[RMDB]
RNA sequence: GGGAACGACUCGAGUAGAGUCGAAAAGAUAUGGACAUCGAUCUAUGACCCAGCGCUACUCGGAAACGAGUAACGCUGCAUAGGGAGUCCUAAGUCAGCCCGUGUUGCGCUUCGGCGCAACACGGAAUCAUAGUGGUUUCUUCGGAAACCACUAUGAAAAAGAAACAACAACAACAAC
Reactivity to DMS in 0.01 (KOAc 150mM, MgCl2 10mM, bicine 150mM(pH8.5), 24C), signal-to-noise 2, nucleotides 027 to 126: g010a040u000a300u000g010g000a020c040a200u000c090g010a100u010c000u000a000u000g000a260c290c250c030a000g040c000g010c010u000a000c000u000c000g000g000a100a040a140c000g010a030g020u000a000a020c000g020c000u000g000c020a010u000a020g000g000g020a070g010u000c000c000u000a020a130g020u000c090a170g000c130c000c000g020u020g000u000u000g030c000g000c000u000u010c270g040g000c040g000c000a000a000c010a010c000g020g000a020a030
Reactivity to 2A3 in 0.01 (KOAc 150mM, MgCl2 10mM, bicine 150mM(pH8.5), 24C), signal-to-noise 1, nucleotides 027 to 126: g000a050u040a050u080g000g000a020c020a200u250c080g100a060u010c020u020a020u030g050a190c170c070c000a000g000c000g010c010u000a000c020u000c000g000g010a040a060a050c020g020a020g000u000a010a010c010g000c030u010g020c020a000u030a000g040g000g000a030g030u000c000c010u040a130a010g050u030c000a030g100c000c000c050g030u020g000u030u030g000c000g000c060u040u120c300g190g000c040g000c090a000a020c000a000c010g050g060a010a060
The record gives the reactivity of an RNA of 177 nucleotides to DMS and 2A3. The reactions ran in a buffer of 150 mM KOAc, 10 mM MgCl2 and 150 mM bicine (pH 8.5), at 24 C. For 2A3 the reverse transcriptase was SuperScript II with manganese.